[RMDB]
RNA sequence: GGGAACGACUCGAGUAGAGUCGAAAAUGCAUGUCGUGUUACUCUGGGUCACGUAAAAACUGGGGAACUUUAAAAUAAACGCAGACGAUAAUUUCGCGAUAGCAGCCUAGUUGCUGCUCGUCCCUCUUAGUCCUCCUGCCGACUAAGACUGGACGUCGGACCUUAGUGAGUUCGCUCACUAAGGUCCAAAAGAAACAACAACAACAAC
Reactivity to 2A3 in 0.01 (KOAc 150mM, MgCl2 10mM, bicine 150mM(pH8.5), 24C), signal-to-noise 1, nucleotides 027 to 156: u170g010c170a050u130g050u240c000g000u010g000u000u030a000c020u000c000u020g000g000g040u060c000a000c030g020u090a000a000a000a000a000c010u000g000g000g000g000a060a040c000u110u040u130a070a300a000a000u100a050a050a000c010g000c000a030g080a150c120g020a050u110a050a260u120u190u200c040g000c020g090a030u090a040g000c000a000g020c000c000u100a110g000u190u230g000c000u000g000c010u000c010g000u000c030c000c000u000c000u010u000a000g000u000c000c030u080c020c040u090g020c090c010g050a000c000u000a000a000g000a000c030u030g000g000a000c000g020u020c100

The record gives the reactivity of an RNA of 207 nucleotides to 2A3.
Values cover nucleotides 27 to 156.
The RNA was probed in 150 mM KOAc, 10 mM MgCl2 and 150 mM bicine (pH 8.5) at 24 C.